[RMDB]
RNA sequence: GGGAACGACUCGAGUAGAGUCGAAAAUGUGUUGGCAUGUGUAUGUGUGUACACGUGGGUUGGGAGAGGCAGAAACCAAAGGGAAGACAGGGUUUCCAGAGAGGCAGCAGCAGCCCUGGCUUCUCCCCUUGAGUGUCCAGGCUGCUGGAACAAAUAAACCCUAAAUAGUGUUCGCACUAUUUAGGGUAAAAGAAACAACAACAACAAC
Reactivity to DMS in 0.01 (KOAc 150mM, MgCl2 10mM, bicine 150mM(pH8.5), 24C), signal-to-noise 2, nucleotides 027 to 156: u010g040u000g040u000u010g010g040c050a030u000g070u000g040u000a040u000g010u020g040u000g000u000a030c010a040c080g030u000g000g010g010u010u000g010g000g010a140g020a080g020g020c070a050g000a080a110a110c070c030a040a110a030g030g020g000a100a070g000a080c080a070g030g010g010u020u000u000c060c030a140g020a170g010a100g020g000c020a130g020c030a030g010c050a070g000c050c010c000u000g060g010c030u000u000c010u000c050c050c090c040u000u010g000a120g030u000g010u020c020c030a050g020g020c040u000g020c000u000g000g020a060a110c070a100a040a100u010a080a080
Reactivity to 2A3 in 0.01 (KOAc 150mM, MgCl2 10mM, bicine 150mM(pH8.5), 24C), signal-to-noise 3, nucleotides 027 to 156: u160g040u020g000u040u070g050g010c050a040u030g010u010g040u050a020u090g230u030g090u100g020u080a020c000a000c040g030u060g030g030g010u060u090g050g020g010a060g000a010g030g040c050a040g040a090a040a020c030c030a060a090a000g030g010g010a020a000g000a010c020a040g000g000g020u010u040u060c050c010a010g030a000g000a010g090g000c030a030g000c010a000g010c000a010g020c070c040c030u010g000g010c010u130u030c010u040c030c050c000c030u090u160g030a020g040u040g030u000c010c000a000g020g020c000u010g000c000u000g010g010a030a020c020a020a090a020u280a180a110